[RMDB]
RNA sequence: GGGAACGACUCGAGUAGAGUCGAAAACUGGGAUUGUCUGGAUUUAAUCCCCGAGCUACGGCUUUAUAAUAGGAAAGAAGCUGAACCACAGGAAGAUAGGGAAUUGGGGUUGCAUCCUUGCUCAACCCCGAUGAGCAGAAUUCGUUCUGCUCAUCGGAAAAGAAACAACAACAACAAC
Reactivity to 2A3 in 0.01 (KOAc 150mM, MgCl2 10mM, bicine 150mM(pH8.5), 24C), signal-to-noise 1, nucleotides 027 to 126: c010u020g000g000g040a060u120u050g030u160c070u080g080g030a110u030u000u250a060a090u100c020c000c050c030g020a010g000c030u070a040c010g030g010c000u000u090u120a060u060a120a220u140a150g000g080a080a080a160g050a050a010g050c010u010g040a040a040c000c010a040c060a020g110g070a050a020g070a090u170a100g010g000g040a030a080u080u090g040g030g000g000u010u000g000c000a020u030c000c020u090u060g040c010u000c030a010a060c040c030
Reactivity to DMS in 0.01 (KOAc 150mM, MgCl2 10mM, bicine 150mM(pH8.5), 24C), signal-to-noise 2, nucleotides 027 to 126: c050u000g030g000g020a050u000u010g000u020c060u010g020g000a150u020u020u020a070a160u010c020c010c010c150g020a080g010c090u010a110c090g030g000c010u000u000u020a060u010a100a140u020a100g010g000a060a140a160g020a050a040g000c030u010g000a070a130c080c060a100c140a110g000g020a070a060g000a100u000a100g000g020g010a040a090u010u000g000g000g010g010u000u000g020c090a090u000c070c040u010u010g000c120u000c030a030a050c040c040
An RNA of 177 nucleotides, treated with 2A3 and DMS and read out base by base. Conditions: 150 mM KOAc, 10 mM MgCl2 and 150 mM bicine (pH 8.5), 24 C. For DMS the reverse transcriptase was MarathonRT. For 2A3, 752 sequencing reads were counted. It was measured as part of the RMDB library OK2TST.